[RMDB]
Structure probing data (DMS and 2A3) for a 207-nucleotide construct.
It was measured as part of the RMDB library OK3TST.
The 2A3 profile rests on 3,375 reads.
The RNA was probed in 150 mM KOAc, 10 mM MgCl2 and 150 mM bicine (pH 8.5) at 24 C.
RNA sequence: GGGAACGACUCGAGUAGAGUCGAAAACGAGUCGUGCAGCCUUGCGCAUACUUGAUGGGUGCUCUUUGGCGAUCGCCUGAAUGAGAUUGAGGCGCAGUGGGGUGAGGCUGUCGACGAGAUCGUCAUAGGUCCCGAACUGGAGUACUGCACGCUCAUCAGACGUAGUUGUAUUCGUACAACUACGUCUAAAAGAAACAACAACAACAAC
Reactivity to DMS in 0.01 (KOAc 150mM, MgCl2 10mM, bicine 150mM(pH8.5), 24C), signal-to-noise 1, nucleotides 027 to 156: c050g010a040g020u080c020g000u000g050c060a080g000c050c100u000u000g010c080g000c090a050u000a070c070u000u000g030a090u010g010g000g000u000g010c010u000c010u030u000u000g020g010c040g010a050u000c040g020c030c000u030g040a080a120u000g000a120g000a300u000u000g010a120g060g020c030g010c060a070g020u000g030g010g000g030u000g010a030g010g010c080u000g000u010c030g030a120c020g000a060g020a040u000c000g030u000c140a090u000a090g010g020u000c000c000c000g000a080a130c100u030g000g000a140g020u000a040c010u000g000c000a050c030g030c010u000c020a210u000c120
Reactivity to 2A3 in 0.01 (KOAc 150mM, MgCl2 10mM, bicine 150mM(pH8.5), 24C), signal-to-noise 5, nucleotides 027 to 156: c070g010a000g120u240c020g000u030g020c010a020g010c010c020u100u180g110c120g030c060a040u090a200c050u110u110g090a130u230g110g030g020u160g040c070u060c010u100u050u080g040g000c020g010a020u010c040g030c040c040u100g100a190a110u150g020a050g050a140u090u140g090a020g010g000c020g000c020a010g010u070g010g070g010g020u090g020a040g060g000c020u010g020u060c020g010a040c020g010a030g000a020u020c010g010u010c000a010u020a060g060g010u010c050c010c000g000a090a040c090u140g030g010a030g020u060a060c010u020g020c010a000c030g020c000u000c000a080u130c050
For 2A3 the reverse transcriptase was SuperScript II with manganese.